[RMDB]
RNA sequence: GGGAACGACUCGAGUAGAGUCGAAAAGAUAUGGACUAUCAUCUGGGUACCGUAGAGCGAUAAGCUACGUUCGGAAACGAACGAUAGCUUUUGACGCUUGAAGGUACCCAGAUGAUAGUCCUAAGUCGUAUGCAUUUAACUUCGGUUAAAUGCAUACAAAAGAAACAACAACAACAAC
Reactivity to DMS in 0.01 (KOAc 150mM, MgCl2 10mM, bicine 150mM(pH8.5), 24C), signal-to-noise 3, nucleotides 027 to 126: g010a080u000a300u000g010g020a000c010u000a000u010c000a030u010c000u000g000g000g000u000a000c000c010g000u000a300g000a000g020c000g010a180u000a020a000g020c020u000a010c000g000u010u000c000g000g020a090a100a290c000g010a000a010c000g030a120u000a000g020c000u000u000u010u010g020a200c060g000c010u000u000g010a170a300g000g000u000a000c000c000c000a000g000a000u000g000a010u000a000g000u000c010c000u000a000a090g010u000c130

This 177-nucleotide RNA was probed chemically with DMS. The RNA was probed in 150 mM KOAc, 10 mM MgCl2 and 150 mM bicine (pH 8.5) at 24 C.